[RMDB]
RNA sequence: GGGAACGACUCGAGUAGAGUCGAAAAUAUUAGGGUGUGAGAGUAUCUCUCUCCCAGCCGGUUCGGGCAGCCAUCUUUUUCGACUUUACUUGGGUUAGCUGCGCGAACUGGCUGGCGUUCCCAGCAACUACUCAAGAUCUUUCGAGAUCUUGAGUAGAAAAGAAACAACAACAACAAC
Reactivity to DMS in 0.01 (KOAc 150mM, MgCl2 10mM, bicine 150mM(pH8.5), 24C), signal-to-noise 2, nucleotides 027 to 126: u000a040u000u000a150g020g010g020u010g000u000g000a020g000a050g030u020a120u000c070u010c010u010c020u000c030c000c000a020g000c010c000g010g000u000u000c000g000g000g010c000a020g000c000c140a050u000c020u000u000u000u000u000c050g000a040c060u000u000u000a050c170u010u000g000g010g000u010u010a040g010c010u000g000c010g000c010g010a010a020c010u000g000g010c000u000g000g000c010g000u000u000c000c000c010a220g000c220a070a170
Reactivity to 2A3 in 0.01 (KOAc 150mM, MgCl2 10mM, bicine 150mM(pH8.5), 24C), signal-to-noise 5, nucleotides 027 to 126: u100a020u060u100a040g010g010g000u020g000u010g010a010g000a020g050u290a300u090c060u000c000u010c000u000c050c020c010a000g000c000c000g000g000u000u000c000g030g110g020c020a000g010c030c040a130u050c110u050u130u030u030u070c030g050a030c030u130u200u270a090c060u140u160g030g000g010u050u070a010g000c000u010g000c200g030c000g060a000a000c000u000g000g000c000u000g000g000c010g000u000u000c000c000c000a000g040c000a010a040